RNA sequence: GGGAACGACUCGAGUAGAGUCGAAAAUUCUUGGCUCCCAGACCUGUCCAAUCAGUUCAGGUAUUCGAUUUAUAGUGGAUAUUGAAUGAAUAGUCAAUUGGGGUUUCAACUUUGUCAAGAUGUUAUUUUCCAAUUUGACGGCGGAUUGCAACCGCCGCAAGUGACAUGCUUUCGAGCAUGUCACUUGAAAAGAAACAACAACAACAAC
Reactivity to DMS in 0.01 (KOAc 150mM, MgCl2 10mM, bicine 150mM(pH8.5), 24C), signal-to-noise 2, nucleotides 027 to 156: u000u010c010u000u000g010g010c000u020c020c020c010a300g020a010c030c020u000g030u010c080c040a080a060u000c040a300g000u000u010c030a070g010g010u000a020u000u000c000g020a230u000u020u010a180u010a210g000u010g010g000a020u000a000u010u000g010a060a110u000g000a080a070u000a090g000u000c070a050a110u000u000g010g000g000g020u010u000u010c130a070a040c040u000u000u000g010u020c020a030a060g000a040u000g020u000u000a210u000u000u000u000c020c040a040a190u000u000u000g020a100c040g020g020c000g020g010a280u000u000g010c160a190a200c000c010g000c000c030g000
Reactivity to 2A3 in 0.01 (KOAc 150mM, MgCl2 10mM, bicine 150mM(pH8.5), 24C), signal-to-noise 4, nucleotides 027 to 156: u040u000c010u000u000g000g000c020u050c030c010c030a010g010a040c000c000u110g030u020c050c030a130a180u070c030a140g040u030u010c010a020g000g030u000a030u010u040c010g050a060u050u300u050a200u140a120g150u190g120g020a050u040a020u070u070g050a050a070u060g030a060a050u040a090g070u060c050a020a060u080u030g070g000g000g000u030u150u140c070a110a070c060u200u200u170g020u020c000a010a000g010a020u020g070u110u060a120u030u040u010u000c020c000a050a060u200u120u170g080a020c010g000g000c000g010g020a020u060u100g030c020a020a040c000c000g000c000c000g000